[RMDB]
RNA sequence: GGGAACGACUCGAGUAGAGUCGAAAAUUUCGAGGGCAAGAACUGCGAACAGAACUACGACGAUUGCCUGGGACAUCUUUGCCAGAACGGAGGAACCUGCAUCGAUGGCAUCUCGGACUACACCUGCAGUGUGUUAUCCUUUCGAGGAUAACACACUAAAAGAAACAACAACAACAAC
Reactivity to DMS in 0.01 (KOAc 150mM, MgCl2 10mM, bicine 150mM(pH8.5), 24C), signal-to-noise 3, nucleotides 027 to 126: u000u000u010c040g000a100g000g010g020c050a080a070g010a070a130c110u000g000c030g010a110a080c060a060g000a120a080c120u000a080c080g000a080c070g000a160u000u000g020c030c010u000g000g010g000a100c070a060u000c060u000u000u000g000c030c050a050g000a060a140c130g000g010a080g000g020a100a100c120c010u000g000c030a060u000c050g000a060u000g000g000c040a060u000c030u000c030g010g010a070c130u000a060c170a100c060c010u010g020c140
Reactivity to 2A3 in 0.01 (KOAc 150mM, MgCl2 10mM, bicine 150mM(pH8.5), 24C), signal-to-noise 3, nucleotides 027 to 126: u070u070u040c040g020a060g040g010g000c020a050a000g010a160a040c060u080g020c040g070a080a040c020a070g100a110a040c050u110a070c080g110a000c020g070a120u030u160g030c000c010u040g010g020g040a020c010a030u040c030u080u100u110g040c030c030a030g020a100a020c040g070g010a060g070g020a030a030c000c000u000g000c020a040u000c040g040a040u050g020g020c020a040u050c030u000c010g040g030a040c060u060a020c060a050c040c010u030g010c020
Structure probing data (DMS and 2A3) for a 177-nucleotide construct.
DMS adducts were read by reverse transcription with MarathonRT.
The data come from the RNA Mapping Database (RMDB), library OK2TRN.
Conditions: 150 mM KOAc, 10 mM MgCl2 and 150 mM bicine (pH 8.5), 24 C.